Background
Chemical mapping of a 177-nucleotide RNA with 2A3 and DMS. 2A3 adducts were read by reverse transcription with SuperScript II with manganese. Source: RMDB libraries RFM100 and RFMREP, as collected in RNAgym. High 2A3 reactivity points to a flexible backbone, as in loops and unpaired stretches. Values cover nucleotides 27 to 126.
RNA sequence: GGGAACGACUCGAGUAGAGUCGAAAAUUAAGCCGACUGUGCUCUUUCCCCAUGGGAGCCCAGUGUGCAAUGGCUGCAAACAGUAGCCUCCUUGGUAGUGUAUGCAGCCUGUUGAUUGUACAGGUUGGAAUAUCCAAUAAUUCGUUAUUGGAUAUUCAAAAGAAACAACAACAACAAC
Reactivity to 2A3 in 0.01 (KOAc 150mM, MgCl2 10mM, bicine 150mM(pH8.5), 24C), signal-to-noise 5, nucleotides 027 to 126: u150u040a100a020g060c020c010g060a030c020u010g010u020g020c000u010c000u000u050u050c000c000c020c010a150u220g020g020g000a010g000c050c070c010a010g010u030g050u080g030c030a050a150u190g000g010c010u010g000c010a010a040a060c000a020g090u140a050g100c010c010u080c070c090u110u090g050g000u040a070g110u020g010u020a030u030g010c000a000g000c010c000u000g010u010u080g020a160u010u010g020u020a040c050a110g080g120u050u080g050
Reactivity to DMS in 0.01 (KOAc 150mM, MgCl2 10mM, bicine 150mM(pH8.5), 24C), signal-to-noise 9, nucleotides 027 to 126: u020u020a090a130g010c030c060g010a060c010u000g000u000g000c000u000c010u000u000u000c030c010c020c080a140u010g010g000g000a020g000c010c050c010a020g020u000g010u020g010c030a070a040u010g010g020c000u000g000c000a010a080a020c020a030g010u010a170g010c010c000u000c290c160u020u010g010g030u000a100g010u000g020u010a060u000g000c000a020g000c000c000u010g000u010u010g000a130u010u000g010u010a040c100a080g010g010u000u000g010